[RMDB]
Notes:
Conditions: 150 mM KOAc, 10 mM MgCl2 and 150 mM bicine (pH 8.5), 24 C. This 177-nucleotide RNA was probed chemically with 2A3 and DMS. DMS adducts were read by reverse transcription with MarathonRT. For DMS, 4,543 sequencing reads were counted. For 2A3 the reverse transcriptase was SuperScript II with manganese.

RNA sequence: GGGAACGACUCGAGUAGAGUCGAAAAAGAAGAGCUCCCUCCUCCGGAGAGAGAAGACCAUAGCGAUAGGGGGAGAUGCUAGGAGUAGGAGGCGACCGAAGCGAGGGGGAAAGUAAAGAAAGCAACGCGUAAUAGGUAAGUUCGCUUACCUAUUACGAAAAGAAACAACAACAACAAC
Reactivity to 2A3 in 0.01 (KOAc 150mM, MgCl2 10mM, bicine 150mM(pH8.5), 24C), signal-to-noise 3, nucleotides 027 to 126: a000g090a030a000g030a020g020c000u010c020c000c010u020c010c000u000c020c060g090g010a040g000a000g010a000g010a100a020g030a020c020c030a090u060a030g040c040g070a060u120a150g020g000g000g010g010a020g010a020u070g000c020u010a020g000g040a050g020u050a030g040g020a010g030g000c030g010a030c020c010g010a030a010g060c040g010a020g000g010g010g000g020a040a040a020g080u110a060a020a050g060a020a060a000g050c020a020a040c030g000
Reactivity to DMS in 0.01 (KOAc 150mM, MgCl2 10mM, bicine 150mM(pH8.5), 24C), signal-to-noise 5, nucleotides 027 to 126: a070g000a140a130g010a140g010c050u000c040c020c010u000c020c010u010c060c070g000g000a090g000a110g000a120g000a050a060g010a090c060c040a110u000a050g010c080g000a160u000a070g010g000g000g000g010a060g010a060u000g010c070u000a060g010g010a050g010u000a080g000g000a070g010g010c060g010a080c040c040g000a060a060g010c090g010a060g000g020g000g010g000a040a030a070g000u000a060a070a060g000a070a050a080g010c070a040a070c190g000